Structure probing data (2A3) for a 207-nucleotide construct. The data come from the RNA Mapping Database (RMDB), library M2RFPK.

RNA sequence: GGGAACGACUCGAGUAGAGUCGAAAAACGGACUACGGUCCGAAGGGUUCGGGGUACUAGUGUGAAUGCCCGGCUAGUACCCUGUGCUAGUGGUUUAUCUACUGAUGUUCAAUUAAGGCCAUUUGAAAAAAGACUCCUAACUUCGGUUAGGAGUCAAGCUCUCUGUUAACUUCGGUUAACAGAGAGCAAAAGAAACAACAACAACAAC
Reactivity to 2A3 in 0.01 (KOAc 150mM, MgCl2 10mM, bicine 150mM(pH8.5), 24C), signal-to-noise 1, nucleotides 027 to 156: a020c020g010g020a000c040u050a020c250g080g000u000c000c020g030a080a050g120g030g030u070u200c020g000g000g000g000u020a000c000u000a000g020u010g050u050g170a270a100u110g050c050c020c000g030g000c000u000a000g000u000a000c000c000c000u010g020u030g000c000u020a050g020u050g070g050u010u110u120a100u090c050u060a100c030u050g030a080u130g130u090u230c050a100a060u220u050a070a020g030g010c000c030a040u070u170u240g180a130a080a000a000a000a000g000a000c000u000c030c000u000a000a000c000u000u050c130g070g000u000u000a000g000g000a000g020u000c000a000a000

Conditions: 150 mM KOAc, 10 mM MgCl2 and 150 mM bicine (pH 8.5), 24 C.